An RNA of 207 nucleotides, treated with 2A3 and DMS and read out base by base. DMS adducts were read by reverse transcription with MarathonRT.
[RMDB]
RNA sequence: GGGAACGACUCGAGUAGAGUCGAAAAGAUAUGGACUGUGUAUGAGCUUGGAUUUAUGUGAGAGGGCACCUCGGAAACGAGGUGCCUCCCCACCUCACAUUGUCAGCUCGAAGCAGUCCUAAGUCAAAAUCCUUAAAAACUUCGGUUUUUAAGGAAAGUUUCAAAAAAGAUUCGUCUUUUUUGAAACAAAAGAAACAACAACAACAAC
Reactivity to 2A3 in 0.01 (KOAc 150mM, MgCl2 10mM, bicine 150mM(pH8.5), 24C), signal-to-noise 3, nucleotides 027 to 156: g010a020u040a050u110g000g010a010c000u010g040u070g070u300a150u300g010a010g020c050u110u170g160g030a050u260u300u080a020u060g000u000g010a010g000a010g010g000g000c010a010c010c020u010c020g010g030a180a060a050c000g000a000g070g020u000g010c000c000u000c020c010c000c000a020c000c000u000c000a000c000a000u010u010g010u030c040a010g010c000u000c000g010a030a000g000c000a000g010u010c000c000u000a000a000g000u000c000a020a020a010a290u030c000c000u000u000a000a010a010a000a010c020u050u070c060g010g000u000u000u000u000u000a000a000g000g000a010a030a030
Reactivity to DMS in 0.01 (KOAc 150mM, MgCl2 10mM, bicine 150mM(pH8.5), 24C), signal-to-noise 1, nucleotides 027 to 156: g000a110u000a220u000g020g020a040c000u000g040u000g000u000a150u000g010a020g000c030u000u010g000g010a050u000u000u000a000u000g000u000g030a050g020a180g050g000g000c000a040c010c010u000c000g000g020a160a090a240c030g040a030g070g030u010g040c000c010u000c040c040c000c040a300c060c080u000c030a060c020a050u000u010g000u010c010a010g040c040u000c010g000a190a300g000c000a020g000u000c010c010u010a000a030g020u000c020a030a060a080a140u000c000c000u020u000a010a010a000a010a000c000u000u000c300g070g020u000u000u000u000u000a000a020g000g000a000a000a040
Values cover nucleotides 27 to 156. Conditions: 150 mM KOAc, 10 mM MgCl2 and 150 mM bicine (pH 8.5), 24 C. The 2A3 profile rests on 2,514 reads.